This 177-nucleotide RNA was probed chemically with 2A3 and DMS.
Conditions: 150 mM KOAc, 10 mM MgCl2 and 150 mM bicine (pH 8.5), 24 C.
The data come from the RNA Mapping Database (RMDB), library TTRDEL.
The 2A3 profile rests on 2,409 reads.
Values cover nucleotides 27 to 126.
[RMDB]
RNA sequence: GGGAACGACUCGAGUAGAGUCGAAAAGAUAUGGAGCAAGAGCGAUAAGCUAGAGUUCGGAAACGAACUGUAGCUUUUGACGCUCGACCUCCUAAGUCAAACAGGUCAGGGUUCGCCCUGACCUGAAGAGGACUAUUAGCUUCGGCUAAUAGUCCUCAAAAGAAACAACAACAACAAC
Reactivity to 2A3 in 0.01 (KOAc 150mM, MgCl2 10mM, bicine 150mM(pH8.5), 24C), signal-to-noise 1, nucleotides 027 to 126: g010a020u050a010u130g000g010a000g000c020a090a030g030a020g030c010g000a060u010a130a000g020c000u030a010g020a000g210u000u000c000g020g000a080a080a000c030g000a000a000c020u020g210u030a000g000c000u000u000u010u050g070a030c000g010c000u000c000g050a000c030c000u030c000c000u040a100a020g050u030c040a070a030a090c000a010g010g010u010c000a000g000g080g060u080u150c210g150c010c000c010u000g000a010c010c000u020g000a010a020
Reactivity to DMS in 0.01 (KOAc 150mM, MgCl2 10mM, bicine 150mM(pH8.5), 24C), signal-to-noise 2, nucleotides 027 to 126: g010a000u000a300u000g000g000a000g000c000a020a300g020a010g010c010g040a240u010a000a000g000c000u000a010g020a020g000u000u010c010g010g010a080a110a130c000g000a010a010c000u010g000u010a000g000c010u000u000u000u020g020a210c070g010c010u000c010g020a300c300c020u000c000c000u000a030a130g000u000c010a110a120a300c040a000g000g000u000c000a020g000g010g030u000u010c290g030c000c010c000u010g000a000c000c000u000g020a010a030